Chemical mapping of a 177-nucleotide RNA with 2A3 and DMS. The 2A3 profile rests on 3,379 reads. The RNA was probed in 150 mM KOAc, 10 mM MgCl2 and 150 mM bicine (pH 8.5) at 24 C.
RNA sequence: GGGAACGACUCGAGUAGAGUCGAAAAAAAGAUAUGGACCUUAUGGAGUGUUAGGUCCACGAAGAACGAGCUCGGAAACGAGCUCGGGAGUGGACCGGGACACGUUGAAAUAAGGUCCUAAGUCAAACACGGUAAGUUAGUUCGCUAACUUACCGUGAAAAGAAACAACAACAACAAC
Reactivity to 2A3 in 0.01 (KOAc 150mM, MgCl2 10mM, bicine 150mM(pH8.5), 24C), signal-to-noise 1, nucleotides 027 to 126: a000a010a000g060a050u120a060u090g000g000a000c000c000u000u000a010u030g090g010a080g000u020g020u000u020a030g000g010u040c010c010a010c000g300a300a030g040a020a000c000g010a000g010c000u000c040g010g010a080a110a060c000g000a000g020c000u000c020g000g020g010a020g000u010g020g000a000c000c010g010g240g000a000c000a000c000g050u080u050g000a040a050a010u000a000a000g000g040u000c000c000u010a000a000g020u000c010a020a030a020
Reactivity to DMS in 0.01 (KOAc 150mM, MgCl2 10mM, bicine 150mM(pH8.5), 24C), signal-to-noise 3, nucleotides 027 to 126: a090a100a120g010a080u000a300u010g010g000a010c000c000u000u000a020u000g030g000a070g010u000g010u000u010a260g010g020u000c000c000a010c000g020a090a110g020a130a200c010g000a010g030c010u000c000g020g000a090a120a170c010g000a010g030c000u000c000g000g000g000a080g030u010g000g010a010c000c000g000g000g000a000c000a010c000g000u000u020g000a100a090a000u010a000a020g000g020u000c000c000u000a000a090g000u000c010a120a090a240

Values are in units of 0.01, from 0 to 300, in steps of 10. Source: RMDB library TTRDES, as collected in RNAgym.